Structure probing data (DMS and 2A3) for a 177-nucleotide construct. For DMS, 674 sequencing reads were counted. It was measured as part of the RMDB library TTRDEL. Reactivities are given for positions 27 through 126. The RNA was probed in 150 mM KOAc, 10 mM MgCl2 and 150 mM bicine (pH 8.5) at 24 C. The 2A3 profile rests on 948 reads. For DMS the reverse transcriptase was MarathonRT.
RNA sequence: GGGAACGACUCGAGUAGAGUCGAAAAGAUAUGGACCGAACAAUAGAGUGGGAGGCACUCGGAAACGAGUGGCCAUCGAUCACUCCGGUCCUAAGUCAAAACUAAUCUCUGUUCGCAGAGAUUAGAAGAUAAAAAUACUCUUCGGAGUAUUUUUAUCAAAAGAAACAACAACAACAAC
Reactivity to DMS in 0.01 (KOAc 150mM, MgCl2 10mM, bicine 150mM(pH8.5), 24C), signal-to-noise 1, nucleotides 027 to 126: g020a010u010a300u010g000g000a010c000c000g000a120a160c200a090a110u010a040g020a080g080u000g000g020g020a090g040g000c010a000c000u010c020g040g000a120a040a250c000g010a020g010u000g020g010c010c020a100u010c110g000a100u000c000a010c020u000c020c020g000g030u010c020c000u000a010a040g000u010c020a080a180a120a270c070u040a000a000u000c000u000c000u000g000u020u010c150g020c010a050g020a000g020a000u000u000a000g000a200a120
Reactivity to 2A3 in 0.01 (KOAc 150mM, MgCl2 10mM, bicine 150mM(pH8.5), 24C), signal-to-noise 1, nucleotides 027 to 126: g000a040u020a010u200g010g010a050c000c000g070a240a120c080a300a160u260a260g020a010g000u020g020g090g000a030g000g040c010a000c000u020c000g010g020a120a060a020c030g010a000g010u030g180g100c000c000a170u300c000g020a070u130c020a000c000u050c070c030g040g000u020c000c000u040a050a020g000u010c010a010a000a070a110c010u020a000a020u020c000u000c000u000g090u070u080c250g000c080a020g010a000g000a000u000u020a000g000a010a040